[RMDB]
RNA sequence: GGGAACGACUCGAGUAGAGUCGAAAAGACUUUAAGGUUUGAACUUUAUGGCGCUUUUUCUGCUGUUACAUGGUUCAAGUAAGAGUGGAUUGGGUCAUCUACCGUGUGGUGAUUCUCGAACGGCUCAGGACGAACAAGGGUUCGCCUUUGUUCGUCCAAAAGAAACAACAACAACAAC
Reactivity to DMS in 0.01 (KOAc 150mM, MgCl2 10mM, bicine 150mM(pH8.5), 24C), signal-to-noise 5, nucleotides 027 to 126: g010a070c040u000u020u010a050a040g000g010u000u000u020g010a070a070c020u010u020u000a030u020g000g000c010g020c030u010u010u010u020u010c070u020g010c020u000g000u000u000a040c060a080u030g010g000u020u020c100a060a070g010u010a040a060g000a060g030u010g000g000a090u010u010g000g000g000u010c030a040u010c050u010a050c030c040g000u010g020u000g000g020u000g010a070u010u010c010u000c040g010a070a100c090g000g000c040u010c070a230
Reactivity to 2A3 in 0.01 (KOAc 150mM, MgCl2 10mM, bicine 150mM(pH8.5), 24C), signal-to-noise 9, nucleotides 027 to 126: g030a030c030u060u080u110a060a050g060g050u050u100u120g060a060a020c000u020u070u100a040u050g030g000c020g070c090u070u110u060u090u060c050u050g020c010u050g060u100u040a050c020a090u100g090g050u040u100c080a050a040g030u050a070a020g000a020g050u050g010g030a060u020u060g030g000g000u020c010a030u000c020u030a070c010c030g050u050g040u060g070g050u020g040a100u060u000c020u010c020g040a090a070c040g030g000c010u020c040a050